[RMDB]
The data come from the RNA Mapping Database (RMDB), library OK1LIB. An RNA of 177 nucleotides, treated with 2A3 and read out base by base. 2A3 adducts were read by reverse transcription with SuperScript II with manganese. Conditions: 150 mM KOAc, 10 mM MgCl2 and 150 mM bicine (pH 8.5), 24 C.

RNA sequence: GGGAACGACUCGAGUAGAGUCGAAAACGCUCCGUUGAGGAUUACGCGGGGGUUGUAGGCGUCACAGCUGUAGUUACGUUGGGCGCAGUGCCUAGAGGUAAACGUACCGGCCCAAAGACGCUCAGCGGGCACGCUAGCAUUUCGAUGCUAGCGUGCCAAAAGAAACAACAACAACAAC
Reactivity to 2A3 in 0.01 (KOAc 150mM, MgCl2 10mM, bicine 150mM(pH8.5), 24C), signal-to-noise 1, nucleotides 027 to 126: c070g020c040u010c040c000g010u080u060g270a110g210g200a300u300u260a090c050g000c060g000g120g060g000g080u000u000g050u110a090g000g100c000g000u090c090a110c070a090g000c000u020g000u300a090g040u180u140a000c240g090u050u000g050g070g050c000g000c000a000g130u180g000c000c000u230a200g040a050g050g180u140a020a020a020c000g000u000a070c000c000g060g060c000c000c000a000a000a060g050a000c000g000c040u000c090a050g000c000g050